[RMDB]
RNA sequence: GGGAACGACUCGAGUAGAGUCGAAAAACAGUCCUGUUUGUCGAAACGAAUGAUACCGACCAUCUCGUCCUCUUCGAAGCGCUCCAGCGCGUCGCUAAGGCCGGAUUUCACGCCGCGUGGCAAAUCGCAGUACGUAUGUGUUCGCACAUACGUACUGAAAAGAAACAACAACAACAAC
Reactivity to 2A3 in 0.01 (KOAc 150mM, MgCl2 10mM, bicine 150mM(pH8.5), 24C), signal-to-noise 2, nucleotides 027 to 126: a000c040a020g090u000c020c010u060g040u050u060u070g060u020c010g040a050a050a140c030g030a100a090u090g010a090u120a120c040c040g040a020c000c030a030u000c060u010c040g020u010c000c020u000c040u010u090c010g020a020a010g000c010g000c010u100c060c010a050g010c040g000c000g030u020c000g010c060u040a050a000g030g000c010c000g040g040a060u080u070u070c080a080c050g030c020c030g050c050g080u120g040g000c040a020a060a090u120c100g000
Reactivity to DMS in 0.01 (KOAc 150mM, MgCl2 10mM, bicine 150mM(pH8.5), 24C), signal-to-noise 4, nucleotides 027 to 126: a060c260a150g010u010c020c030u000g010u000u010u000g030u000c050g000a070a090a060c090g000a120a100u000g000a070u000a050c060c030g000a080c040c050a070u000c060u000c030g000u000c040c010u000c060u000u000c040g010a040a040g020c070g000c030u000c160c210a120g000c020g010c030g010u000c060g020c080u010a070a090g000g020c020c040g000g000a110u010u010u000c070a040c120g000c110c040g010c120g010u000g020g020c060a040a030a040u010c140g020
Chemical mapping of a 177-nucleotide RNA with 2A3 and DMS. The RNA was probed in 150 mM KOAc, 10 mM MgCl2 and 150 mM bicine (pH 8.5) at 24 C. High DMS reactivity at an A or C suggests that its Watson-Crick edge is free. Values cover nucleotides 27 to 126. Source: RMDB library RFMREP, as collected in RNAgym. For DMS the reverse transcriptase was MarathonRT.